[RMDB]
RNA sequence: GGGAACGACUCGAGUAGAGUCGAAAAAAUAGUUGUGAUCAUGGAAAAGUCACUAUGUGUUCUGAGCUGGAGUCCUUUUCAAUGUAGGCGAUAAUAUUUGCUCCACUACCUCAAAGGAUUGUUGUGUUAGUGACCGCGAACACAUCAGAAGUCCUGACGCUAAAUUUAGGUUCGCCUAAAUUUAGCGAAAAGAAACAACAACAACAAC
Reactivity to DMS in 0.01 (KOAc 150mM, MgCl2 10mM, bicine 150mM(pH8.5), 24C), signal-to-noise 1, nucleotides 027 to 156: a130a060u000a090g010u000u000g010u000g020a130u000c060a050u010g030g000a100a050a170a100g050u000c070a060c020u000a090u000g010u000g030u000u000c010u000g010a130g020c000u030g020g000a090g000u000c020c010u000u000u000u000c080a070a100u010g010u010a050g010g000c070g020a230u000a040a130u000a140u000u000u000g000c010u000c010c040a130c110u000a060c020c010u020c020a080a050a080g000g020a060u000u000g010u000u000g000u000g020u010u000a100g010u010g000a120c040c090g040c030g000a010a010c000a000c030a030u010c030a060g000a100a060g000u000c010c000u000g000a240
Reactivity to 2A3 in 0.01 (KOAc 150mM, MgCl2 10mM, bicine 150mM(pH8.5), 24C), signal-to-noise 3, nucleotides 027 to 156: a000a010u200a050g030u050u020g010u000g000a040u050c060a100u110g050g040a100a130a040a000g110u150c020a010c030u020a020u020g030u000g000u040u010c030u040g020a030g040c030u010g110g040a060g140u170c030c000u160u100u070u120c080a110a120u250g060u100a090g030g030c040g060a000u050a100a080u060a140u060u180u090g010c010u000c010c010a020c000u010a010c010c030u050c020a060a060a030g120g030a210u040u170g040u080u010g050u000g000u050u050a030g000u020g020a060c040c000g000c010g040a010a000c000a010c000a000u070c110a020g070a120a000g070u040c020c020u030g030a030
Chemical mapping of a 207-nucleotide RNA with DMS and 2A3. Reactivities are given for positions 27 through 156. Source: RMDB library OK3TST, as collected in RNAgym. The reactions ran in a buffer of 150 mM KOAc, 10 mM MgCl2 and 150 mM bicine (pH 8.5), at 24 C.